[RMDB]
RNA sequence: GGGAACGACUCGAGUAGAGUCGAAAACGACCAGUUGCAUUGCAGAAGUCUUUUACAUUAAACAUGGUGGUAUGAUAUUUCGAAGAUUUUGUCAGACUCUGCUCUUCCCAGCUCUCGACAAAUUUGACAUACCACUAGGGUUCGCCCUAGUGGUAUGAAAAGAAACAACAACAACAAC
Reactivity to 2A3 in 0.01 (KOAc 150mM, MgCl2 10mM, bicine 150mM(pH8.5), 24C), signal-to-noise 3, nucleotides 027 to 126: c080g050a060c010c010a010g020u060u070g070c050a080u050u070g030c020a010g030a180a030g080u060c050u000u110u060u090a070c030a060u120u140a070a170a040c040a080u090g000g070u040g040g010u150a040u100g070a070u070a110u140u150u090c070g060a080a030g040a120u040u030u050u120g080u020c030a010g000a000c000u000c000u030g020c000u000c010u040u000c000c000c010a000g040c040u040c020u060c030g130a080c090a060a130a040u140u060u030g040a040
Reactivity to DMS in 0.01 (KOAc 150mM, MgCl2 10mM, bicine 150mM(pH8.5), 24C), signal-to-noise 4, nucleotides 027 to 126: c070g010a120c030c060a100g010u010u000g000c060a080u010u000g020c050a050g010a080a080g010u000c070u000u000u000u000a090c090a080u000u000a060a060a090c070a060u010g010g020u000g000g010u000a060u000g010a090u000a080u000u000u000c050g000a100a090g010a050u000u000u000u010g000u010c080a190g000a040c020u000c030u000g010c010u000c020u000u000c020c020c010a180g000c060u000c020u000c040g010a060c160a030a070a100u000u010u000g010a280